RNA sequence: GGGAACGACUCGAGUAGAGUCGAAAAGUGGCCUUUCCACCUUGAAGCACAGUGUUGAUAGAAAGGCAGGGUCAACAGUUAAAACUCCUGUCACAGUAGCUGAUGUCAAAGAAUACUUUGUGGAGGGGAAGUCAAAGAUUGCAAAUAGACCAACUGGCCUAAAUCAAACAUUCGUGUUUGAUUUAGGAAAAGAAACAACAACAACAAC
Reactivity to 2A3 in 0.01 (KOAc 150mM, MgCl2 10mM, bicine 150mM(pH8.5), 24C), signal-to-noise 7, nucleotides 027 to 156: g110u090g040g010c010c000u010u040u000c010c020a050c010c000u020u060g070a080a010g030c020a020c020a050g020u040g040u240u140g090a140u080a170g110a060a080a020g010g000c000a000g030g000g010u070c050a050a050c040a220g030u090u150a080a090a030a040c020u050c020c000u030g010u050c020a030c030a120g040u080a010g020c030u040g020a220u050g140u080c040a070a060a000g060a080a070u130a180c060u090u140u140g010u030g000g010a010g020g000g000g010a010a020g040u050c030a040a070a040g050a090u080u060g010c000a000a030a190u090a090g030a010c030c010a030a050c070u050g070g000
Reactivity to DMS in 0.01 (KOAc 150mM, MgCl2 10mM, bicine 150mM(pH8.5), 24C), signal-to-noise 2, nucleotides 027 to 156: g030u000g040g010c030c020u010u000u010c000c020a100c030c060u000u000g010a070a070g050c040a080c050a140g020u000g010u010u000g030a110u000a060g020a090a100a110g000g000c010a050g030g030g030u000c050a040a150c070a150g020u000u000a070a080a050a100c020u020c030c010u010g020u010c020a110c050a110g000u010a100g000c060u000g000a060u000g050u000c060a100a030a100g000a160a120u000a060c010u000u000u000g010u000g010g010a110g010g000g000g010a040a100g000u000c030a090a120a130g010a090u000u020g020c030a040a080a110u000a070g010a110c040c020a020a180c100u010g010g010

Chemical mapping of a 207-nucleotide RNA with 2A3 and DMS. For DMS, 4,360 sequencing reads were counted. For 2A3, 5,318 sequencing reads were counted. The RNA was probed in 150 mM KOAc, 10 mM MgCl2 and 150 mM bicine (pH 8.5) at 24 C. It was measured as part of the RMDB library OK3TST.